Background
An RNA of 177 nucleotides, treated with DMS and 2A3 and read out base by base. It was measured as part of the RMDB library M2PK50. Conditions: 150 mM KOAc, 10 mM MgCl2 and 150 mM bicine (pH 8.5), 24 C. For DMS, 8,833 sequencing reads were counted. Values are in units of 0.01, from 0 to 300, in steps of 10. Values cover nucleotides 27 to 126.

[RMDB]
RNA sequence: GGGAACGACUCGAGUAGAGUCGAAAAUUGCAAGCCUUCGGGCUUGCAAGGUGUCGGAAUGCGGAAUAUAUAAUCCUCCGCUUAAGGUUUAUACCGACUUAAGUGCCAGGCUGUUCGCAGCCUGGAAAAUCAUAAGUUCGUUCGCGAACUUAUGAUUAAAAGAAACAACAACAACAAC
Reactivity to DMS in 0.01 (KOAc 150mM, MgCl2 10mM, bicine 150mM(pH8.5), 24C), signal-to-noise 6, nucleotides 027 to 126: u000u000g000c000a000a000g020c000c000u000u010c220g040g020g010c000u000u000g010c000a000a000g000g010u000g000u000c020g010g000a160a090u010g010c000g000g000a030a050u000a140u010a120u010a120a130u020c210c090u000c010c010g010c010u000u000a050a090g000g010u000u010u010a110u000a150c010c000g010a020c010u000u000a050a120g000u010g000c000c000a010g000g000c000u000g000u000u010c190g010c010a000g000c000c000u000g000g000a000a030
Reactivity to 2A3 in 0.01 (KOAc 150mM, MgCl2 10mM, bicine 150mM(pH8.5), 24C), signal-to-noise 3, nucleotides 027 to 126: u000u010g000c000a000a000g010c010c040u030u090c250g110g020g000c010u030u010g000c000a010a010g040g020u060g000u000c000g010g040a130a040u130g020c020g000g060a080a020u140a010u040a020u050a170a140u080c020c020u010c010c010g000c000u020u050a040a010g060g020u100u150u090a100u100a050c000c000g000a000c000u110u110a190a040g100u080g160c000c010a000g000g000c000u010g030u050u050c200g000c070a000g000c000c000u000g000g000a030a000